Record summary
Structure probing data (DMS and 2A3) for a 207-nucleotide construct. For DMS, 3,525 sequencing reads were counted. Values cover nucleotides 27 to 156. The RNA was probed in 150 mM KOAc, 10 mM MgCl2 and 150 mM bicine (pH 8.5) at 24 C.

RNA sequence: GGGAACGACUCGAGUAGAGUCGAAAAAGGCUGCAAUCUCGGCACUUUGAGAGGCCAAGGCAGGCUGCUGGGAGGUGGAGGUUGUAGCCAGCCGAGAUCACGCCACUGCACUCCAGCCUGGGCACCAUUGAGCACUGAGUGAACGAGACUCCGUCUACAGCCAUUACUAUUUCGAUAGUAAUGGCUGAAAAGAAACAACAACAACAAC
Reactivity to DMS in 0.01 (KOAc 150mM, MgCl2 10mM, bicine 150mM(pH8.5), 24C), signal-to-noise 2, nucleotides 027 to 156: a050g020g040c020u000g020c020a060a030u010c020u010c030g030g060c030a100c050u000u020u000g010a110g010a090g000g050c000c020a050a100g000g030c110a120g000g020c040u000g000c000u000g010g010g010a070g010g080u010g010g030a060g020g030u000u000g050u010a050g010c020c000a000g000c070c020g020a150g000a070u010c080a080c070g000c000c010a040c040u000g000c000a030c010u000c020c010a030g040c030c020u010g000g010g000c050a110c020c060a140u010u010g020a110g020c020a120c070u000g010a090g010u010g000a090a110c060g000a140g010a080c040u000c020c000g000u000c010u000a180
Reactivity to 2A3 in 0.01 (KOAc 150mM, MgCl2 10mM, bicine 150mM(pH8.5), 24C), signal-to-noise 3, nucleotides 027 to 156: a000g020g000c010u010g000c010a020a010u010c000u010c020g070g030c020a020c070u030u080u100g150a120g010a050g030g000c010c010a030a040g130g020c070a050g000g010c010u040g000c030u080g030g070g020a050g020g000u030g020g010a030g010g000u010u020g010u040a010g000c000c000a000g010c000c020g050a050g000a040u130c040a020c080g000c020c010a060c050u050g000c020a010c040u000c010c010a030g000c010c010u020g010g000g010c030a030c040c020a090u050u090g040a030g020c020a020c030u030g010a010g050u050g040a110a040c020g010a010g040a050c000u000c020c010g010u030c010u040a030